The record gives the reactivity of an RNA of 170 nucleotides to DMS and 2A3.

[RMDB]
RNA sequence: GGGAACGACUCGAGUAGAGUCGAAAACCAGAUGCCCGCGCUAAACAGGAUGUUUCUCUCCUUAGUAAGUGCUAUAAGGCUAUGAAUGCAUAUCCUCUUGUAGUCACUCCUCUUGUUUCAGCAGGCAAAAGUGUGGCCUUCGGGCCACACAAAAGAAACAACAACAACAAC
Reactivity to DMS in 0.01 (KOAc 150mM, MgCl2 10mM, bicine 150mM(pH8.5), 24C), signal-to-noise 3, nucleotides 027 to 129: c050c020a070g030a150u050g050c000c020c090g070c150g040c000u000a040a050a080c000a030g000g070a050u000g070u010u100u000c140u000c100u040c070c030u000u010a090g040u060a160a020g060u030g010c030u020a020u000a020a110g030g010c070u000a070u010g010a280a190u080g040c060a030u020a050u050c020c040u080c120u030u040g020u000a020g040u040c040a070c080u010c200c060u040c000u010u080g020u050u010u040c170a060g000c010a000g030g040c060a070a100a040a000
Reactivity to 2A3 in 0.01 (KOAc 150mM, MgCl2 10mM, bicine 150mM(pH8.5), 24C), signal-to-noise 4, nucleotides 027 to 129: c000c000a010g050a020u110g020c000c020c000g070c040g000c030u040a000a000a000c000a000g010g010a000u020g090u030u270u000c160u000c050u060c020c050u030u020a020g000u060a070a070g020u000g000c010u020a010u000a070a010g030g000c000u000a040u050g180a260a090u240g130c010a030u030a060u150c000c040u080c020u020u020g010u010a020g110u140c020a020c020u010c000c000u000c010u010u000g010u020u030u010c050a010g010c000a010g000g040c000a000a060a000a110
Values cover nucleotides 27 to 129. It was measured as part of the RMDB library 15KLIB. For 2A3, 6,768 sequencing reads were counted. As a SHAPE reagent, 2A3 marks flexible, mostly unpaired nucleotides at the ribose 2'-OH.